[RMDB]
The record gives the reactivity of an RNA of 207 nucleotides to 2A3.
RNA sequence: GGGAACGACUCGAGUAGAGUCGAAAAUUCAACACCGCCGUGGACGACCUGCGCGGGCUCUGGCGGAUCGCCCGCCGCAAACGCACCGGAGCGGCCCGGGUGGCCGUUCCUCCGCGCGGGCCGGUCACCGCCGAGCACCCCGACGCGGUGCUGGCCCGCCGCAGGAUAUCUUCGGAUAUCCUGCGGCAAAAGAAACAACAACAACAAC
Reactivity to 2A3 in 0.01 (KOAc 150mM, MgCl2 10mM, bicine 150mM(pH8.5), 24C), signal-to-noise 1, nucleotides 027 to 156: u080u010c000a020a010c020a020c090c000g110c010c050g030u130g040g040a070c040g040a070c030c040u030g000c000g000c030g020g010g020c000u080c120u270g030g010c000g080g000a030u100c080g080c100c000c000g040c020c040g030c020a160a140a020c070g010c060a040c070c070g010g000a000g000c020g000g000c020c010c000g300g080g050u230g010g010c000c050g020u000u000c000c000u000c000c000g000c010g000c000g010g000g000c000c030g000g010u060c030a010c100c020g000c000c010g070a040g050c030a070c000c040c000c080g030a020c050g010c010g000g000u010g020c010u000g010g010c000c080c010